[RMDB]
The record gives the reactivity of an RNA of 177 nucleotides to DMS. Conditions: 150 mM KOAc, 10 mM MgCl2 and 150 mM bicine (pH 8.5), 24 C. The data come from the RNA Mapping Database (RMDB), library M2PK50. DMS adducts were read by reverse transcription with MarathonRT.

RNA sequence: GGGAACGACUCGAGUAGAGUCGAAAAGGCUCCACCUUCGGGUGGAGCCAUCUACCGAGAAAGCACCUCGGUAUAAAAGUGCAACCCUUGGAAACAAGGCAAUAAGCCCCUGGUUCGCCAGGGGCAAGUAAAAAACGGUAUUCGUACCGUUUUUUACAAAAGAAACAACAACAACAAC
Reactivity to DMS in 0.01 (KOAc 150mM, MgCl2 10mM, bicine 150mM(pH8.5), 24C), signal-to-noise 2, nucleotides 027 to 126: g000g030c000u020c000c020a010c010c000u010u000c230g030g040g030u010g000g000a000g000c000c000a010u000c010u000a220c010c000g000a000g000a060a070a230g000c000a020c010c010u000c000g000g010u010a050u020a000a010a030a030g040u000g010c020a120a150c300c010c000u010u000g000g010a180a100a170c000a000a000g000g010c260a030a090u010a130a150g020c000c020c000c000u000g000g010u000u010c140g030c000c010a000g000g000g000g000c010a000a020